[RMDB]
RNA sequence: GGGAACGACUCGAGUAGAGUCGAAAACAGCCUCCUCGCUGGCGCCGGCUGGGCAACAUUCCGAGGGGACCGUCCCCUCGGUAAUGGCGAAUGGGACCCAGAAAUCUCUCUAGAUUCCGAUAGAGAACAAGAUAUACCUUCGGGUAUAUCAAAAGAAACAACAACAACAAC
Reactivity to 2A3 in 0.01 (KOAc 150mM, MgCl2 10mM, bicine 150mM(pH8.5), 24C), signal-to-noise 9, nucleotides 027 to 129: c010a010g020c000c000u030c010c030u030c040g030c050u080g030g010c070g040c010c010g020g030c020u030g010g010g000c020a060a020c010a050u030u030c010c000g000a010g000g010g000g020a040c040c040g290u270c020c000c000c000u000c010g000g000u010a000a010u010g020g010c050g040a040a050u100g040g020g040a050c000c000c000a010g030a020a120a010u060c050u000c000u000c000u010a050g010a230u160u020c020c020g050a040u020a030g030a000g020a020a030c060a070a030
Reactivity to DMS in 0.01 (KOAc 150mM, MgCl2 10mM, bicine 150mM(pH8.5), 24C), signal-to-noise 8, nucleotides 027 to 129: c090a110g000c000c040u000c050c020u000c020g070c040u000g030g050c100g020c040c030g000g020c040u000g000g000g010c070a080a060c050a000u000u000c000c000g020a000g000g000g000g000a190c180c200g060u080c010c010c000c000u020c030g000g000u000a000a000u010g000g000c100g020a090a080u020g010g030g000a100c060c010c020a050g030a080a130a070u050c050u020c000u010c020u030a080g030a130u070u000c050c030g000a120u040a060g020a060g030a080a090c110a090a110